[RMDB]
RNA sequence: GGGAACGACUCGAGUAGAGUCGAAAAUGUGCCUAAUUUGGUUUAGAGGCAGGUCCUGGAAGAUGUGUCUAAAAAUGAUGCAUAAAAUUUUCUUAGGAAAACGAGAGAAAAUAUCCCAUAUAAGAGGAAUAACAGGCACAAGAUUCACAAGUAAAAAAGGGUAUAGUAAUUUCGAUUACUAUACCCUAAAAGAAACAACAACAACAAC
Reactivity to 2A3 in 0.01 (KOAc 150mM, MgCl2 10mM, bicine 150mM(pH8.5), 24C), signal-to-noise 1, nucleotides 027 to 156: u130g000u050g040c000c030u080a100a150u000u040u030g040g000u010u070u100a060g010a000g070g020c010a000g010g010u000c000c000u020g010g000a010a010g060a030u000g010u000g010u010c010u080a160a040a040a020a110u210g010a000u000g010c000a010u060a010a210a020a040u010u010u010u040c030u090u200a040g060g050a050a030a020a020c000g040a020g000a000g000a050a000a000a000u060a010u050c010c020c020a010u010a000u010a050a030g000a000g020g000a010a010u010a010a000c020a000g000g000c010a030c020a020a000g030a010u140u120c090a000c090a070a040g220u300a140a140a210a160a280